The data come from the RNA Mapping Database (RMDB), library ARCHII. Chemical mapping of a 207-nucleotide RNA with DMS and 2A3. Conditions: 150 mM KOAc, 10 mM MgCl2 and 150 mM bicine (pH 8.5), 24 C. The 2A3 profile rests on 1,948 reads. For DMS the reverse transcriptase was MarathonRT. The DMS profile rests on 2,430 reads.
RNA sequence: GGGAACGACUCGAGUAGAGUCGAAAAGACUGUAAUGGUCUAACGGUGAAGGCGUUCAAACCCGUUCAACCGCCCAUCCCAAUACUGUAGUACUUCGGUAUCGCAGCCCUCCGCCGCGCCCCGCCCGAACGCUGCGGUGGUCGCCCACUCGUGCAGGCAGACUAAAACAGUUCGCUGUUUUAGUCUGAAAAGAAACAACAACAACAAC
Reactivity to DMS in 0.01 (KOAc 150mM, MgCl2 10mM, bicine 150mM(pH8.5), 24C), signal-to-noise 1, nucleotides 027 to 156: g000a040c010u000g030u020a110a130u010g000g010u010c000u000a100a050c010g010g050u000g010a080a120g020g010c010g000u020u030c090a120a180a080c090c040c010g000u000u000c080a150a050c010c000g010c020c000c050a180u000c000c000c040a080a160u020a030c010u000g020u010a060g030u020a040c030u000u000c230g050g020u000a040u000c000g020c020a060g000c050c060c050u010c020c000g040c040c050g000c000g010c030c000c020c040g000c050c030c040g000a040a030c060g060c020u020g020c080g020g010u010g020g010u000c010g000c020c060c020a080c070u000c060g000u010g020c040a160g000g040
Reactivity to 2A3 in 0.01 (KOAc 150mM, MgCl2 10mM, bicine 150mM(pH8.5), 24C), signal-to-noise 3, nucleotides 027 to 156: g010a000c020u040g080u220a090a140u180g000g000u010c020u010a090a030c020g000g020u040g060a060a020g060g010c050g020u080u050c110a130a120a160c050c030c050g010u070u040c060a080a060c020c010g020c020c030c000a040u000c000c020c000a050a050u140a130c030u030g070u090a110g020u020a010c030u040u060c200g080g010u020a040u110c060g000c020a000g020c010c000c000u040c020c000g020c020c010g000c000g000c000c000c010c000g020c010c020c020g000a020a010c010g020c040u020g000c000g030g000u080g000g040u100c040g020c000c000c010a080c030u070c020g040u050g020c020a000g060g030